RNA sequence: GGGAACGACUCGAGUAGAGUCGAAAAUAAGCUUUGGUGGCGCCCUAUUUUUAGUUAUGGUAGAACUUGGAGGGUUUCAGAGCUUUAGGUAGCCAAAAGGGCCUAGUGGUACCCUCUGCCAAUUGCAGACACCAGGUAUAUUCGUAUACCUGGUGUCAAAAGAAACAACAACAACAAC
Reactivity to 2A3 in 0.01 (KOAc 150mM, MgCl2 10mM, bicine 150mM(pH8.5), 24C), signal-to-noise 1, nucleotides 027 to 126: u070a000a000g020c010u030u010u060g180g000u090g300g010c080g050c060c000c000u060a140u080u230u010u030u070a070g000u060u140a080u240g120g050u120a060g020a260a020c010u010u070g050g050a000g060g000g010u080u090u070c060a020g000a000g030c020u070u000u020a010g030g010u060a000g070c020c060a150a260a080a160g040g020g060c000c000u030a040g050u030g050g060u060a110c010c040c000u110c000u020g000c010c000a070a080u160u150g020c010a000
Reactivity to DMS in 0.01 (KOAc 150mM, MgCl2 10mM, bicine 150mM(pH8.5), 24C), signal-to-noise 2, nucleotides 027 to 126: u000a050a050g010c020u000u000u000g010g040u010g050g010c140g000c020c010c010u020a020u010u020u010u010u000a060g000u000u000a100u010g010g040u010a080g000a040a060c040u000u000g020g000a030g000g020g010u000u010u000c050a050g030a090g000c030u000u000u000a040g010g000u010a060g000c060c040a050a060a110a120g020g010g010c020c020u000a060g010u000g000g030u010a060c010c010c030u000c040u010g000c010c030a050a070u010u010g020c170a170

Source: RMDB library OK2TRN, as collected in RNAgym. Structure probing data (2A3 and DMS) for a 177-nucleotide construct. Values are in units of 0.01, from 0 to 300, in steps of 10. For 2A3, 618 sequencing reads were counted. DMS adducts were read by reverse transcription with MarathonRT. The reactions ran in a buffer of 150 mM KOAc, 10 mM MgCl2 and 150 mM bicine (pH 8.5), at 24 C.